This 177-nucleotide RNA was probed chemically with DMS and 2A3.
The reactions ran in a buffer of 150 mM KOAc, 10 mM MgCl2 and 150 mM bicine (pH 8.5), at 24 C.
DMS adducts were read by reverse transcription with MarathonRT.
[RMDB]
RNA sequence: GGGAACGACUCGAGUAGAGUCGAAAACUUCUUCCCUGCAGUGAGGUCACAAUCCUGUGUUUGUGACAUAGCAGUCAGUUGCCAUGGAGAUGAUUGCUUUAUCACCAACUCCUCUUUGCAAUGACUUAGCUAUGUUACAGUUCGCUGUAACAUAGCUAAAAGAAACAACAACAACAAC
Reactivity to DMS in 0.01 (KOAc 150mM, MgCl2 10mM, bicine 150mM(pH8.5), 24C), signal-to-noise 2, nucleotides 027 to 126: c220u000u010c110u000u010c000c010c010u000g020c000a050g000u000g000a000g000g000u000c100a080c100a050a130u010c140c180u000g020u000g000u000u010u010g030u000g000a020c020a030u000a010g020c020a000g010u000c000a010g020u000u020g020c040c200a080u010g010g010a030g010a120u010g010a050u000u000g000c080u010u010u000a040u010c090a050c130c090a030a090c050u010c000c010u000c010u010u000u010g000c020a040a000u010g010a060c070u000u000
Reactivity to 2A3 in 0.01 (KOAc 150mM, MgCl2 10mM, bicine 150mM(pH8.5), 24C), signal-to-noise 3, nucleotides 027 to 126: c010u060u030c000u030u020c010c000c020u000g030c000a030g010u020g020a020g000g050u090c080a020c040a130a160u210c060c070u190g020u040g000u140u040u030g020u020g000a000c010a030u030a000g000c000a020g000u010c000a040g040u080u080g150c040c060a130u180g150g030a160g030a110u030g020a030u000u020g020c000u030u040u030a070u040c000a000c030c010a040a030c010u000c020c010u020c040u050u090u030g000c010a050a080u040g030a050c000u000u010
It was measured as part of the RMDB library RFMREP. For DMS, 2,173 sequencing reads were counted.